[RMDB]
Overview
Structure probing data (2A3 and DMS) for a 177-nucleotide construct. Values cover nucleotides 27 to 126. For DMS, 1,952 sequencing reads were counted. The RNA was probed in 150 mM KOAc, 10 mM MgCl2 and 150 mM bicine (pH 8.5) at 24 C. In probing experiments dimethyl sulfate is read out at A N1 and C N3, which are open when not base-paired.

RNA sequence: GGGAACGACUCGAGUAGAGUCGAAAACUCAGUGGAACAAGAACUACGGCAAGGACGAACCGUGGAUUCAAGUUGGGGUCGAUGCCUCAGGCCUUGAACUCCGUUGUCUGGGGAACCGUGCGUCCCCGACUCAUUGGGGCUUCGGCCCCAAUGAGUCAAAAGAAACAACAACAACAAC
Reactivity to 2A3 in 0.01 (KOAc 150mM, MgCl2 10mM, bicine 150mM(pH8.5), 24C), signal-to-noise 3, nucleotides 027 to 126: c060u020c040a110g030u160g090g050a000a070c060a130a110g040a030a000c000u020a020c070g060g000c070a160a030g110g010a040c010g020a090a040c030c020g000u030g030g050a240u100u080c000a000a080g030u020u010g000g000g000g000u030c110g100a050u220g010c010c000u010c040a010g040g000c020c090u050u080g060a020a040c040u040c050c010g030u010u080g060u070c220u220g000g000g000g010a000a050c020c090g150u100g050c080g000u070c000c010c000c020
Reactivity to DMS in 0.01 (KOAc 150mM, MgCl2 10mM, bicine 150mM(pH8.5), 24C), signal-to-noise 2, nucleotides 027 to 126: c000u010c000a150g020u010g020g000a040a160c110a070a070g030a040a090c040u000a070c020g000g000c130a110a060g020g000a060c120g000a110a100c050c020g000u000g000g000a240u000u030c040a050a160g010u030u000g000g000g020g020u000c010g000a020u010g020c000c000u000c030a030g000g000c220c000u000u000g010a070a110c190u000c060c050g010u040u040g000u000c000u010g030g000g000g030a000a040c060c180g000u010g010c040g030u010c020c000c010c030